[RMDB]
RNA sequence: GGGAACGACUCGAGUAGAGUCGAAAAAGGCUAGUUCGAAGUUCUCGGCGUAGGGCUUCGACCGCGGUUGCGUGGAGCGUUGCGUCCACAGCGAUCGUGGACGGUUGUGGAGACAGCAGCUCCAUACGCGGGUUUCGUCGUUCGCGAUGGAACCCGCAAAAGAAACAACAACAACAAC
Reactivity to DMS in 0.01 (KOAc 150mM, MgCl2 10mM, bicine 150mM(pH8.5), 24C), signal-to-noise 2, nucleotides 027 to 126: a060g010g000c030u020a080g020u020u000c010g010a010a010g000u000u000c000u000c010g000g020c180g040u030a020g000g000g020c010u000u000c000g010a000c050c080g000c040g010g000u000u020g020c050g010u010g000g000a010g020c050g000u000u020g000c060g000u000c010c000a020c010a070g020c020g020a120u020c030g000u000g000g010a060c080g000g020u030u000g010u000g000g000a050g000a100c060a080g030c070a080g010c000u000c000c000a030u000a040c190
Reactivity to 2A3 in 0.01 (KOAc 150mM, MgCl2 10mM, bicine 150mM(pH8.5), 24C), signal-to-noise 6, nucleotides 027 to 126: a000g130g000c060u080a040g060u080u010c010g010a010a000g000u020u010c010u030c060g130g110c120g110u240a010g010g000g000c000u000u000c000g010a000c000c000g030c030g010g020u030u070g010c030g000u010g010g000a020g010c130g190u290u170g000c030g080u010c000c010a000c010a010g020c030g060a090u070c040g020u090g050g020a030c020g070g000u030u060g010u000g000g020a010g010a030c030a030g050c030a020g020c010u000c000c000a020u040a020c070
This 177-nucleotide RNA was probed chemically with DMS and 2A3. Conditions: 150 mM KOAc, 10 mM MgCl2 and 150 mM bicine (pH 8.5), 24 C. 2A3 adducts were read by reverse transcription with SuperScript II with manganese.